[RMDB]
RNA sequence: GGGAACGACUCGAGUAGAGUCGAAAAAGAGAAAAACCGACCUUAAAUUGCGCGAACUGCAGCGAUCGCGUAUACUUUUGGCGUUGACGUAAUACAGUGUGCUUGCGGCUACCACCUGUAACCAUGCCGGUUAAUAUUUGUUCGCAAAUAUUAACCGAAAAGAAACAACAACAACAAC
Reactivity to 2A3 in 0.01 (KOAc 150mM, MgCl2 10mM, bicine 150mM(pH8.5), 24C), signal-to-noise 9, nucleotides 027 to 126: a000g100a010g060a010a040a020a010a020c060c030g100a170c020c010u080u090a040a070a070u120u050g000c000g000c010g010a030a030c040u080g010c050a030g030c020g070a060u010c000g000c010g010u020a020u060a060c030u030u050u050u070g050g000c030g040u060u110g070a050c060g060u100a040a040u090a090c050a050g030u030g010u030g190c020u050u070g030c000g020g000c020u040a050c000c020a020c000c000u040g020u050a040a020c020c000a040u100g050c030
Reactivity to DMS in 0.01 (KOAc 150mM, MgCl2 10mM, bicine 150mM(pH8.5), 24C), signal-to-noise 6, nucleotides 027 to 126: a070g000a170g000a070a050a040a080a070c060c030g000a130c040c020u000u020a010a040a060u020u000g010c000g000c000g010a020a050c030u010g010c030a040g010c030g010a040u000c010g000c010g010u010a020u020a050c080u010u000u000u000g020g020c030g010u010u000g020a090c150g020u010a070a070u010a070c080a050g020u010g010u010g000c060u000u010g010c020g000g010c030u010a080c100c030a040c030c030u000g000u010a050a110c070c040a070u010g010c160

Source: RMDB libraries RFM100 and RFMREP, as collected in RNAgym.
Structure probing data (2A3 and DMS) for a 177-nucleotide construct.
For DMS the reverse transcriptase was MarathonRT.
The RNA was probed in 150 mM KOAc, 10 mM MgCl2 and 150 mM bicine (pH 8.5) at 24 C.
Reactivities are given for positions 27 through 126.